[RMDB]
RNA sequence: GGGAACGACUCGAGUAGAGUCGAAAAAUGGCGUCGAUAGAGAAGAUUUGUUUAUAACAACGAAGUUAUGGAAUGACUAUCAAGGUUAUGAGAAAACAUUCGAAUAUUUCAACAAAUCGAUUGAAAACACUGGGCAGACUUUCGAGUCUGCCCAGUGAAAAGAAACAACAACAACAAC
Reactivity to DMS in 0.01 (KOAc 150mM, MgCl2 10mM, bicine 150mM(pH8.5), 24C), signal-to-noise 1, nucleotides 027 to 126: a080u010g030g000c030g000u000c000g000a210u000a080g000a150g040a020a120g000a010u000u000u000g000u000u000u000a000u040a050a090c010a150a300c080g000a070a040g000u000u000a000u000g010g000a090a110u000g000a050c000u070a090u040c300a150a140g060g110u030u000a090u000g000a190g000a080a170a030a000c000a030u070u000c000g000a030a180u040a070u000u000u000c050a010a000c030a000a010a000u000c010g000a300u020u000g000a240a040a040a070
Reactivity to 2A3 in 0.01 (KOAc 150mM, MgCl2 10mM, bicine 150mM(pH8.5), 24C), signal-to-noise 2, nucleotides 027 to 126: a000u070g040g000c040g010u170c070g030a150u040a100g170a030g000a210a000g020a040u000u000u060g080u020u040u050a150u030a140a030c110a070a000c080g110a140a090g000u010u010a020u090g040g030a090a060u010g000a030c010u020a060u220c100a170a080g130g000u010u010a050u060g020a060g080a050a110a000a000c010a190u010u010c000g000a010a000u090a170u100u120u000c040a030a020c010a000a140a010u050c000g050a140u070u160g010a070a070a000a000
Structure probing data (DMS and 2A3) for a 177-nucleotide construct. For 2A3 the reverse transcriptase was SuperScript II with manganese. Source: RMDB library OK1LIB, as collected in RNAgym. For 2A3, 494 sequencing reads were counted. For DMS the reverse transcriptase was MarathonRT. Conditions: 150 mM KOAc, 10 mM MgCl2 and 150 mM bicine (pH 8.5), 24 C.